[RMDB]
RNA sequence: GGGAACGACUCGAGUAGAGUCGAAAAGCGCAAUAAGUCGCAGGUACUGGACCCGAAGCGGAGGUGACCUACCCUUGGCCAGGUUGAAGCAUGGGUAAAACCAUGUGGAGGACCGAACAGGUGAACGGCGUAAGAAGACGUUCGCGUCUUCUUACGCAAAAGAAACAACAACAACAAC
Reactivity to DMS in 0.01 (KOAc 150mM, MgCl2 10mM, bicine 150mM(pH8.5), 24C), signal-to-noise 1, nucleotides 027 to 126: g000c020g000c030a230a110u010a040a060g070u010c060g000c010a030g030g000u000a120c030u000g000g090a230c010c050c060g000a070a130g000c130g020g060a030g010g020u000g010a060c020c020u000a170c060c020c000u000u000g000g000c000c060a130g000g000u000u000g000a270a290g010c000a000u000g000g000g000u000a090a040a100a190c000c020a000u020g000u000g000g010a230g020g000a040c010c000g050a160a170c160a060g000g000u000g010a060a060c130g000